Structure probing data (2A3 and DMS) for a 177-nucleotide construct. The RNA was probed in 150 mM KOAc, 10 mM MgCl2 and 150 mM bicine (pH 8.5) at 24 C. 2A3 is a SHAPE reagent: it acylates the 2'-hydroxyl of flexible nucleotides of all four kinds. Source: RMDB library OK1LIB, as collected in RNAgym. For 2A3 the reverse transcriptase was SuperScript II with manganese.

RNA sequence: GGGAACGACUCGAGUAGAGUCGAAAACAGAGGGAGAAGGUGCUGGUGCCUUACUAUUGAUUCAGAAAUACCAAGUUAAGACCUUAUUUUUCAACACGCUAGCUACUGAGUCCAGUAUAGAGUCAGAACCCGAAAACGAAUUCGUUCGUUUUCGGGUAAAAGAAACAACAACAACAAC
Reactivity to 2A3 in 0.01 (KOAc 150mM, MgCl2 10mM, bicine 150mM(pH8.5), 24C), signal-to-noise 3, nucleotides 027 to 126: c030a000g040a030g090g050g010a060g030a100a000g070g000u050g000c040u050g080g010u090g020c000c030u080u080a090c020u040a110u040u120g150a060u080u030c020a000g160a060a010a000u140a090c030c010a140a040g010u080u070a110a020g050a090c010c000u130u090a230u090u220u050u040u070c040a040a020c020a030c060g040c000u030a000g020c000u020a060c030u010g000a020g080u000c040c000a000g000u030a120u050a070g110a000g060u020c010a010g030a060
Reactivity to DMS in 0.01 (KOAc 150mM, MgCl2 10mM, bicine 150mM(pH8.5), 24C), signal-to-noise 2, nucleotides 027 to 126: c100a060g000a030g000g010g040a130g020a020a090g000g020u030g000c030u000g000g000u020g040c120c040u000u000a080c060u080a060u040u050g000a150u020u000c140a040g000a050a150a020u000a070c050c010a020a080g000u000u000a070a060g020a020c160c020u000u010a260u000u000u000u020u000c010a140a090c120a050c000g060c000u040a000g000c040u010a120c000u040g000a090g010u010c010c020a030g000u000a090u030a020g000a070g000u000c110a060g000a090
Reactivities are given for positions 27 through 126.